[RMDB]
This 177-nucleotide RNA was probed chemically with 2A3 and DMS. High 2A3 reactivity points to a flexible backbone, as in loops and unpaired stretches.

RNA sequence: GGGAACGACUCGAGUAGAGUCGAAAACAUUGAACCUUCGUUCUCACCUUGGAAUUCUCCUGUGUUUGUAAUUCAGAAGAAAUCAGGCAAAUGGCGUAUGUUAACUGACUUAAGGGCUGUAAACGCCCAUCCACCACCGAUUCGUCGGUGGUGGAUGAAAAGAAACAACAACAACAAC
Reactivity to 2A3 in 0.01 (KOAc 150mM, MgCl2 10mM, bicine 150mM(pH8.5), 24C), signal-to-noise 3, nucleotides 027 to 126: c040a050u040u150g090a060a050c010c000u050u000c030g010u020u020c010u020c010a070c020c020u030u090g010g080a030a020u110u010c000u070c000c020u030g010u010g060u100u070u080g210u160a100a100u080u050c010a000g050a090a000g010a010a110a050u080c020a040g070g040c020a100a130a100u070g100g000c030g050u090a080u030g100u030u030a060a110c040u030g140a020c010u080u100a150a160g000g040g000c040u070g060u170a130a130a030c050g000c000c000
Reactivity to DMS in 0.01 (KOAc 150mM, MgCl2 10mM, bicine 150mM(pH8.5), 24C), signal-to-noise 3, nucleotides 027 to 126: c150a150u060u030g000a110a100c050c010u000u040c000g000u000u020c010u000c030a180c070c000u000u030g010g000a080a050u020u010c000u000c020c020u000g000u000g020u020u010u020g000u030a140a080u000u010c020a030g000a070a050g000a020a050a110u000c020a030g000g000c170a030a040a100u020g010g000c040g000u000a060u020g000u010u020a070a090c050u000g000a080c090u010u010a070a070g020g030g020c000u000g000u000a050a070a090c150g000c010c000

For 2A3, 1,319 sequencing reads were counted. The DMS profile rests on 5,451 reads.